Structure probing data (DMS and 2A3) for a 207-nucleotide construct. The data come from the RNA Mapping Database (RMDB), library RNAMAK. The 2A3 profile rests on 3,478 reads. The reactions ran in a buffer of 150 mM KOAc, 10 mM MgCl2 and 150 mM bicine (pH 8.5), at 24 C.
RNA sequence: GGGAACGACUCGAGUAGAGUCGAAAAGCGUACUACGGUGAGGUUGAAGCUAGAGCUACCAAGAAUACUCCCAAAUAGGAGUAUUCGACGUAGCUCUUGGACCUUCAACUCCCCACCACCGUAUCGCAAAAUCAAUCUUGUUUCGACAAGAUUGAAACUCUAUCUGGAACUUCGGUUCCAGAUAGAGAAAAGAAACAACAACAACAAC
Reactivity to DMS in 0.01 (KOAc 150mM, MgCl2 10mM, bicine 150mM(pH8.5), 24C), signal-to-noise 1, nucleotides 027 to 156: g000c020g030u000a050c070u000a010c040g000g020u000g010a250g020g010u010u000g020a080a030g000c040u000a010g010a040g000c000u000a020c000c010a070a300g010a000a020u000a000c000u010c020c000c020a080a130a200u010a070g000g010a060g010u000a030u000u000c010g010a300c300g020u000a000g000c000u000c000u030u000g050g010a070c300c000u000u000c000a040a000c000u010c140c060c060c040a300c000c000a010c020c020g010u000a040u010c040g050c040a070a090a100a120u000c000a020a000u000c000u000u000g000u010u000u010c300g070a060c030a020a010g000a050u000u000g010a040a140a140
Reactivity to 2A3 in 0.01 (KOAc 150mM, MgCl2 10mM, bicine 150mM(pH8.5), 24C), signal-to-noise 3, nucleotides 027 to 156: g020c020g030u120a090c050u000a000c030g000g000u000g000a020g020g000u010u000g000a000a000g040c010u010a000g010a000g010c010u010a000c000c020a040a000g000a000a000u000a000c000u040c030c060c050a150a250a140u300a100g000g000a000g000u000a010u000u000c000g010a000c010g010u000a000g000c000u000c000u000u000g000g000a020c000c000u000u000c000a000a000c010u060c030c010c030c000a010c010c000a010c000c000g010u010a050u300c030g010c040a040a050a000a130u030c010a010a000u010c000u010u000g030u040u130u100c160g100a010c010a000a000g000a010u000u000g000a010a000a010